This 177-nucleotide RNA was probed chemically with DMS. The data come from the RNA Mapping Database (RMDB), library OK2TST. For DMS, 797 sequencing reads were counted. The RNA was probed in 150 mM KOAc, 10 mM MgCl2 and 150 mM bicine (pH 8.5) at 24 C.
RNA sequence: GGGAACGACUCGAGUAGAGUCGAAAAUAGAAGAGGAUAAUGACCAAGAAGAGGAUAGUAUAAUCCCAGAUUCAGAGGCAUCCGGAUACGAGAGUGAAACAAACCUUUCUGAAGACUGCUCGCAGAGUACAGCUUCAUACUUCGGUAUGAAGCUGUAAAAAGAAACAACAACAACAAC
Reactivity to DMS in 0.01 (KOAc 150mM, MgCl2 10mM, bicine 150mM(pH8.5), 24C), signal-to-noise 1, nucleotides 027 to 126: u010a030g000a040a140g010a080g000g000a020u000a060a100u010g010a150c040c050a090a170g020a080a060g010a140g000g020a020u010a070g010u000a090u000a100a100u010c000c000c000a130g000a140u010u010c060a110g000a010g010g040c060a040u000c000c040g010g000a100u000a020c160g010a030g010a100g000u010g000a050a040a040c140a040a050a120c090c060u000u000u010c040u000g010a060a070g010a100c040u000g030c030u000c040g010c080a030g020a130g020